[RMDB]
RNA sequence: GGGAACGACUCGAGUAGAGUCGAAAAACGUGGGUUUUUUUUCGAAUUGAGUGAUUAUGCAACCAUACAGGAACCUUACAUAAGCGCAAGUAGUUGAAUAGUGGAUUCAAGAAGCAAAACUUUACUAAACACAAAGAAAUUUCGAUUUCUUUGUGUUAAAAGAAACAACAACAACAAC
Reactivity to 2A3 in 0.01 (KOAc 150mM, MgCl2 10mM, bicine 150mM(pH8.5), 24C), signal-to-noise 4, nucleotides 027 to 126: a000c070g010u050g020g040g010u040u000u000u000u000u000u020u070c060g070a130a090u040u050g040a040g050u060g030a040u030u040a040u090g010c010a030a020c000c020a040u040a130c020a010g040g050a040a040c000c000u040u040a060c070a100u190a080a050g030c010g010c100a060a050g010u020a000g010u050u040g020a030a020u060a040g050u040g050g060a010u040u020c020a030a010g030a030a020g050c040a000a020a000a020c000u030u030u000a020c000u060a120
Reactivity to DMS in 0.01 (KOAc 150mM, MgCl2 10mM, bicine 150mM(pH8.5), 24C), signal-to-noise 5, nucleotides 027 to 126: a080c160g030u000g000g010g000u010u000u000u010u020u010u010u000c040g000a090a150u030u020g000a080g020u000g010a030u000u010a040u020g020c030a030a040c030c060a300u000a060c060a080g000g010a080a050c110c030u000u010a060c150a090u020a040a070g020c100g000c100a060a040g000u000a040g010u010u010g010a050a020u000a060g010u000g000g010a050u000u000c040a020a050g000a060a050g030c120a050a030a040a090c060u000u000u010a030c050u010a080